An RNA of 177 nucleotides, treated with 2A3 and DMS and read out base by base.
Reactivities are rounded to 0.1 and cut off at 0 and 3.
For DMS the reverse transcriptase was MarathonRT.

RNA sequence: GGGAACGACUCGAGUAGAGUCGAAAAGCAUGCUACGGCGCAUGAUCCGCGCCUAUGGCCGGCGCGUCGGUGAUGCUGACGUAGAGGACUUGGCCGUGAUGCUGGAAGUGCAGCGAGAGCUUGACGCCCUGGGGUAGGGUUUCGACCCUACCCCAGGAAAAGAAACAACAACAACAAC
Reactivity to 2A3 in 0.01 (KOAc 150mM, MgCl2 10mM, bicine 150mM(pH8.5), 24C), signal-to-noise 1, nucleotides 027 to 126: g010c010a030u120g070c010u070a060c030g060g000c040g050c050a020u030g080a170u060c010c000g010c070g040c020c010u120a170u120g160g040c030c000g010g070c020g020c000g050u070c030g100g000u080g060a070u230g030c020u000g000a040c000g010u050a040g000a080g150g040a040c060u150u110g080g000c000c000g010u020g010a030u110g010c020u050g000g100a060a000g070u130g050c040a030g020c010g040a080g000a000g070c000u060u100g030a030c020g050c000
Reactivity to DMS in 0.01 (KOAc 150mM, MgCl2 10mM, bicine 150mM(pH8.5), 24C), signal-to-noise 2, nucleotides 027 to 126: g020c020a010u010g000c060u010a040c040g020g000c010g030c010a040u020g010a100u010c020c010g020c120g010c010c010u000a050u010g000g020c090c140g020g010c040g010c000g020u000c030g020g020u000g000a090u010g020c010u000g030a060c030g010u000a030g010a190g000g000a070c040u000u010g010g000c010c020g020u000g010a050u000g010c030u010g020g010a110a140g010u000g000c020a040g000c040g020a200g020a150g000c010u000u000g020a090c080g030c110